Description: Chemical mapping of a 170-nucleotide RNA with 2A3 and DMS. The DMS profile rests on 1,925 reads.
[RMDB]
RNA sequence: GGGAACGACUCGAGUAGAGUCGAAAAUAAUAGACCACAACUCACAUUUGUGAAGAAUUUUAUUACUGCCAAUCCGGCAUGGAGUAAGGCAGUCUUUAUUUCGCCUUACAAUUCACAGAAUGCUGUGCUACCGGCCGCUUCGGCGGCCGGAAAAGAAACAACAACAACAAC
Reactivity to 2A3 in 0.01 (KOAc 150mM, MgCl2 10mM, bicine 150mM(pH8.5), 24C), signal-to-noise 2, nucleotides 027 to 129: u090a000a110u030a000g030a050c010c000a000c100a040a000c070u030c040a030c000a070u000u000u040g000u020g000a000a000g060a130a030u050u130u010u010a140u200u050a050c000u040g000c060c050a020a060u080c070c060g000g090c120a060u010g050g010a040g000u000a010a010g020g060c060a000g000u110c000u020u110u000a120u000u020u040c000g040c000c000u000u020a000c060a020a260u000u000c000a000c000a000g210a140a000u010g000c080u070g010u000g000c010u070a100
Reactivity to DMS in 0.01 (KOAc 150mM, MgCl2 10mM, bicine 150mM(pH8.5), 24C), signal-to-noise 2, nucleotides 027 to 129: u050a220a000u140a130g000a140c000c000a130c160a020a230c050u040c150a130c050a270u010u070u060g080u000g000a000a110g000a120a040u000u000u010u180a000u080u030a030c000u000g010c050c000a180a110u040c170c200g080g060c000a000u040g020g020a260g000u020a080a000g050g010c000a140g000u140c000u000u010u170a130u100u130u000c140g000c000c020u130u000a000c070a070a070u040u010c000a180c000a130g000a070a110u000g020c020u000g000u080g000c300u000a000
Annotation: The RNA was probed in 150 mM KOAc, 10 mM MgCl2 and 150 mM bicine (pH 8.5) at 24 C. For DMS the reverse transcriptase was MarathonRT.